[RMDB]
RNA sequence: GGGAACGACUCGAGUAGAGUCGAAAAGUCUUUGGCCAAACAUAAGUACGUGUCAGUGGAACGCGGUGCUGGGCACGCUAUGAACACAGCCUUUUGCCCUAGCCUAUAUGAAAAGUUUGGGCUAGAAGGCAAAUGGAUUGUUCGCAAUCCAUUUGCCAAAAGAAACAACAACAACAAC
Reactivity to DMS in 0.01 (KOAc 150mM, MgCl2 10mM, bicine 150mM(pH8.5), 24C), signal-to-noise 2, nucleotides 027 to 126: g020u010c030u000u010u010g030g000c060c080a110a060a120c060a070u000a090a090g000u010a070c070g030u010g030u010c030a070g050u020g010g000a060a110c120g030c060g000g030u000g010c060u050g020g020g010c040a020c080g050c060u000a060u010g000a060a070c140a040c280a090g000c010c010u010u000u000u000g000c020c020c000u000a000g000c000c040u010a050u000a030u000g000a070a040a120a240g010u030u000u000g000g000g000c010u000a000g000a070a050
Reactivity to 2A3 in 0.01 (KOAc 150mM, MgCl2 10mM, bicine 150mM(pH8.5), 24C), signal-to-noise 1, nucleotides 027 to 126: g040u000c050u030u040u040g000g020c140c000a050a090a050c010a050u090a220a080g050u060a060c030g000u010g020u020c010a050g030u120g050g100a190a030c070g010c040g150g030u060g000c010u040g000g050g040c000a010c000g040c010u070a030u280g040a090a000c050a020c030a090g000c030c000u000u110u100u050g090c060c000c000u000a000g000c010c040u070a080u000a040u170g140a100a130a040a080g020u000u050u030g020g030g000c000u010a020g020a060a040